Overview: The data come from the RNA Mapping Database (RMDB), library OK3TST. Chemical mapping of a 207-nucleotide RNA with DMS and 2A3. 2A3 adducts were read by reverse transcription with SuperScript II with manganese. The reactions ran in a buffer of 150 mM KOAc, 10 mM MgCl2 and 150 mM bicine (pH 8.5), at 24 C. The 2A3 profile rests on 1,117 reads.
[RMDB]
RNA sequence: GGGAACGACUCGAGUAGAGUCGAAAAAUAUUUAUAUCUUACACUGGGAAGAUUGUUGCUGGCUCUCAGUCUGCUUCCAGUCUGCUCAUAUUGCUUUUGUUGUAAUGAUGGUCAUAUGUGGGAGCUCAGUGUCAAGAGGGCAGACUUGAGCCCACAAAGUAAAUACCGUAUUCGUACGGUAUUUACUAAAAGAAACAACAACAACAAC
Reactivity to DMS in 0.01 (KOAc 150mM, MgCl2 10mM, bicine 150mM(pH8.5), 24C), signal-to-noise 1, nucleotides 027 to 156: a090u000a080u010u030u000a090u010a090u020c040u000u000a100c020a060c080u030g020g040g000a170a080g000a110u010u000g030u000u010g020c000u010g060g020c030u000c050u010c070a110g010u000c030u020g020c010u000u000c040c030a090g000u000c000u000g000c000u010c000a140u000a040u000u000g000c010u000u000u000u000g030u000u000g010u000a050a110u020g020a100u000g000g030u000c100a100u000a100u000g030u000g010g040g030a090g030c020u000c000a020g000u010g020u000c120a030a100g040a110g050g010g040c010a120g000a030c030u000u000g010a130g010c020c010c020a010c040a060a150
Reactivity to 2A3 in 0.01 (KOAc 150mM, MgCl2 10mM, bicine 150mM(pH8.5), 24C), signal-to-noise 2, nucleotides 027 to 156: a020u120a080u090u270u120a180u050a080u130c030u030u080a030c030a010c020u040g000g060g000a030a000g030a080u040u050g010u040u040g030c080u040g060g030c010u000c000u010c060a000g050u000c030u050g020c000u060u040c000c000a030g040u040c020u020g040c000u010c060a060u100a130u170u120g000c050u120u150u060u090g050u100u020g030u070a140a090u100g020a010u070g010g070u130c020a020u060a040u110g030u080g000g020g000a030g060c000u000c000a040g010u040g030u090c050a070a050g040a090g030g020g010c000a000g000a000c000u040u060g020a020g000c000c000c000a020c000a000a090